[RMDB]
The record gives the reactivity of an RNA of 207 nucleotides to 2A3 and DMS.
The DMS profile rests on 3,393 reads.
Reactivities are given for positions 27 through 156.
The reactions ran in a buffer of 150 mM KOAc, 10 mM MgCl2 and 150 mM bicine (pH 8.5), at 24 C.
For 2A3, 3,045 sequencing reads were counted.
For 2A3 the reverse transcriptase was SuperScript II with manganese.
Source: RMDB library OK3TST, as collected in RNAgym.
RNA sequence: GGGAACGACUCGAGUAGAGUCGAAAAUGCAUAUAUAGAGGUGGAAUAAAUGAAGUUGAACGAAGUAUUCGCAACUAAUUUAAGGGUAAUCAUGGCUAGAGAUAACGUAAGUGUCCAAGAUUUGCACAAUGAAACUGGCGUAUCAAGAUCAACUAUACCCAUCAUACCUGUUCGCAGGUAUGAUGGGAAAAGAAACAACAACAACAAC
Reactivity to 2A3 in 0.01 (KOAc 150mM, MgCl2 10mM, bicine 150mM(pH8.5), 24C), signal-to-noise 4, nucleotides 027 to 156: u070g000c020a000u040a010u030a000u070a130g040a030g010g050u040g020g070a100a080u090a100a080a050u110g040a060a010g020u020u040g040a130a060c040g030a100a040g080u170a160u110u060c020g000c030a020a020c040u060a050a070u090u080u120a040a020g010g000g020u020a050a000u030c040a040u100g010g000c000u020a010g000a010g010a100u050a120a000c030g020u060a030a050g030u050g030u110c030c000a060a000g050a090u050u070u080g020c040a030c020a080a120u110g030a080a060a020c050u030g020g000c010g020u020a020u070c080a050a010g030a080u080c020a010a010c010u090a010u190a150
Reactivity to DMS in 0.01 (KOAc 150mM, MgCl2 10mM, bicine 150mM(pH8.5), 24C), signal-to-noise 2, nucleotides 027 to 156: u000g050c100a070u010a070u000a100u000a060g010a100g010g020u010g020g010a100a070u000a010a030a080u010g030a090a130g000u010u000g000a070a160c050g000a040a210g050u000a180u000u000c050g000c040a060a040c070u000a070a090u010u000u000a090a100g020g000g000u000a040a130u000c070a060u000g060g010c000u000a080g040a100g030a070u010a050a080c070g020u000a040a090g000u000g020u030c000c020a100a110g000a100u000u000u000g020c090a080c040a070a080u010g010a070a090a040c060u010g000g010c030g020u000a070u020c020a050a100g030a090u000c070a020a090c050u000a050u000a210